[RMDB]
RNA sequence: GGGAACGACUCGAGUAGAGUCGAAAAGAUAUGGACACUUCAACAGCCCAAACGGUCUCGGAAACGAGACUUGGGACAUGAAGGUCCUAAGUCAAAACUAGUGAGCCCCUUCGGGGGCUCACUAGAACAUAGUCAUGUACUUCGGUACAUGACUAUGAAAAGAAACAACAACAACAAC
Reactivity to 2A3 in 0.01 (KOAc 150mM, MgCl2 10mM, bicine 150mM(pH8.5), 24C), signal-to-noise 1, nucleotides 027 to 126: g010a000u050a030u140g000g030a040c090a140c300u000u000c020a100a100c040a160g050c010c010c000a010a110a060c210g080g000u000c000u010c020g000g040a080a040a050c000g000a000g030a000c010u000u000g000g000g000a030c020a110u070g010a000a020g010g000u000c000c010u000a100a030g030u030c010a000a040a130a280c000u000a010g010u020g000a010g060c060c010c020c060u030u140c230g000g000g000g000g000c010u000c000a000c000u000a000g000a000a000
Reactivity to DMS in 0.01 (KOAc 150mM, MgCl2 10mM, bicine 150mM(pH8.5), 24C), signal-to-noise 2, nucleotides 027 to 126: g010a050u000a300u000g020g010a020c000a120c010u010u000c000a030a080c250a190g000c020c000c010a000a100a150c250g010g000u000c010u000c000g000g000a140a070a200c000g010a010g000a010c000u000u000g000g000g000a020c030a150u000g000a000a010g010g000u010c000c000u000a010a090g010u000c000a050a070a140a180c000u000a000g020u000g000a010g000c000c000c000c000u000u020c170g020g040g010g000g020c000u000c010a000c000u000a000g010a060a200